[RMDB]
RNA sequence: GGGAACGACUCGAGUAGAGUCGAAAACGGCAUCGAACACCAUGCCGCUCAUCUCGGCCAUCAGCUUGUGGAAGCGCGGGUAUUCGCUGUAGGGCACACCGCCGCCUUCCCGGAAGCAGCGAAUGACUCGGCCUACGCGAUUCGUCGCGUAGGCCGAAAAAGAAACAACAACAACAAC
Reactivity to 2A3 in 0.01 (KOAc 150mM, MgCl2 10mM, bicine 150mM(pH8.5), 24C), signal-to-noise 1, nucleotides 027 to 126: c020g000g000c060a000u030c080g080a040a070c020a050c060c040a000u060g050c010c020g040c030u020c000a110u090c020u000c000g020g000c020c000a100u090c060a100g100c050u220u300g040u190g010g040a030a000g010c010g000c050g080g000g090u170a080u050u030c030g010c020u030g020u180a210g010g020g000c000a000c000a000c030c010g000c000c000g040c000c020u030u010c020c000c000g060g000a090a000g000c030a000g000c000g050a050a030u080g020a080c030
An RNA of 177 nucleotides, treated with 2A3 and read out base by base. Values cover nucleotides 27 to 126.